Structure probing data (2A3 and DMS) for a 177-nucleotide construct. The RNA was probed in 150 mM KOAc, 10 mM MgCl2 and 150 mM bicine (pH 8.5) at 24 C. 2A3 adducts were read by reverse transcription with SuperScript II with manganese.
[RMDB]
RNA sequence: GGGAACGACUCGAGUAGAGUCGAAAAGGUUGGGUGAAAAGCGUAGCUGCAGCCCCUGAUGUUCUCCACUGCUAGGGUCAGAGAGCGUCGUGUCGAGCGCAGCAAAGCCAAGACGCCACACACAUCCAACGAUUUAGCCAUUCGUGGCUAAAUCGUUAAAAGAAACAACAACAACAAC
Reactivity to 2A3 in 0.01 (KOAc 150mM, MgCl2 10mM, bicine 150mM(pH8.5), 24C), signal-to-noise 3, nucleotides 027 to 126: g110g010u070u070g030g000g000u030g030a050a000a040a030g030c030g030u100a000g000c010u010g000c060a090g020c010c020c010c000u020g020a000u000g000u000u000c000u000c000c010a070c040u080g100c110u230a230g110g000g070u090c050a020g000a010g000a000g020c000g010u010c000g010u030g050u060c080g030a050g010c010g000c020a010g000c010a100a020a040g000c020c000a010a030g060a010c020g010c030c000a050c000a000c000a000c000a060u020c000c000
Reactivity to DMS in 0.01 (KOAc 150mM, MgCl2 10mM, bicine 150mM(pH8.5), 24C), signal-to-noise 3, nucleotides 027 to 126: g020g050u030u000g010g030g000u010g000a060a090a300a190g010c010g000u000a210g000c000u000g000c000a230g050c030c030c020c010u010g020a010u000g000u000u000c010u030c010c300a130c040u020g030c070u000a140g000g000g000u030c280a110g000a010g000a010g010c010g010u000c020g010u000g000u030c160g000a090g010c010g010c020a030g020c010a050a090a250g010c010c070a060a080g010a180c080g000c060c000a110c080a110c130a040c060a070u020c070c020